[RMDB]
Chemical mapping of a 177-nucleotide RNA with DMS and 2A3.

RNA sequence: GGGAACGACUCGAGUAGAGUCGAAAACGAGGCGACGUAUAGGGUCUGACGCCUGCCCGGUGCCGGAAGGUCACGCGGAGGUGUUAGCGCGAGCGAAGCACCGAAGCCAAGCCCCGGUAAACGGCGGAUACCUAAGCCGUUUCGACGGCUUAGGUAUAAAAGAAACAACAACAACAAC
Reactivity to DMS in 0.01 (KOAc 150mM, MgCl2 10mM, bicine 150mM(pH8.5), 24C), signal-to-noise 7, nucleotides 027 to 126: c090g010a040g000g000c040g010a080c040g020u030a070u010a130g000g000g010u020c040u010g000a130c050g000c030c010u000g000c040c000c010g030g020u030g030c000c010g000g000a100a040g020g020u010c110a180c300g000c000g000g010a300g000g000u000g000u000u000a300g000c000g010c270g000a190g000c000g030a120a110g000c020a010c000c000g000a300a210g000c000c060a100a240g010c000c000c010c010g000g000u030a000a100a100c120g000g010c020g000g000
Reactivity to 2A3 in 0.01 (KOAc 150mM, MgCl2 10mM, bicine 150mM(pH8.5), 24C), signal-to-noise 6, nucleotides 027 to 126: c050g040a060g040g020c030g020a080c030g090u130a090u160a250g090g050g020u040c060u060g050a020c030g030c010c010u030g010c000c010c000g100g010u040g000c010c000g020g030a160a090g010g010u070c030a000c090g010c010g000g020a030g000g000u020g110u230u010a010g000c010g000c010g010a030g000c000g010a010a010g000c000a000c000c000g010a020a000g000c000c000a020a030g000c000c000c000c000g010g000u030a060a100a010c020g010g000c000g010g000
2A3 adducts were read by reverse transcription with SuperScript II with manganese. Conditions: 150 mM KOAc, 10 mM MgCl2 and 150 mM bicine (pH 8.5), 24 C.